[RMDB]
RNA sequence: GGGAACGACUCGAGUAGAGUCGAAAACGGUACUAUGAAUUGAUGCAAGGUGUGGAGGGACCUUAAACAGUUCUGGUGGUGCUCUGAAUGGAGUGCUCUACUGAGAUUAUAAAAUAGAAGGUAAGCUGAAGGGGAAAUGAGUUCGCUCAUUUCCCAAGAAAUCUAACAUCUUCGGAUGUUAGAUUUCAAAAGAAACAACAACAACAAC
Reactivity to DMS in 0.01 (KOAc 150mM, MgCl2 10mM, bicine 150mM(pH8.5), 24C), signal-to-noise 1, nucleotides 027 to 156: c020g020g000u000a050c030u000a130u000g000a090a110u020u010g030a090u000g010c110a090a090g000g010u020g030u020g020g010a060g000g020g020a110c020c020u000u000a120a080a090c030a100g000u010u000c040u000g000g040u000g010g000u000g020c000u000c020u000g010a120a130u020g010g010a090g020u000g010c020u000c020u000a040c070u000g010a050g000a140u000u010a080u010a060a030a060a090u000a060g000a100a080g020g010u000a040a080g020c050u010g000a080a160g000g000g010g010a000a020a010u010g000a050g000u000u010c300g000c020u010c000a030u000u010u010c010c000c010a000a060
Reactivity to 2A3 in 0.01 (KOAc 150mM, MgCl2 10mM, bicine 150mM(pH8.5), 24C), signal-to-noise 9, nucleotides 027 to 156: c030g010g040u070a040c040u070a080u160g040a060a060u110u050g050a050u070g050c040a040a030g020g000u040g010u050g040g020a020g010g000g010a010c000c000u050u070a040a110a020c020a040g010u040u030c020u080g030g010u030g010g020u020g010c020u000c020u060g130a100a080u200g010g010a020g020u040g010c010u020c020u050a040c020u040g020a020g000a070u050u090a060u140a120a080a040a020u090a030g050a050a020g040g010u050a030a030g030c040u060g090a070a060g000g000g000g010a000a000a000u010g000a000g020u040u100c140g030c070u000c000a000u010u000u000c000c000c000a000a000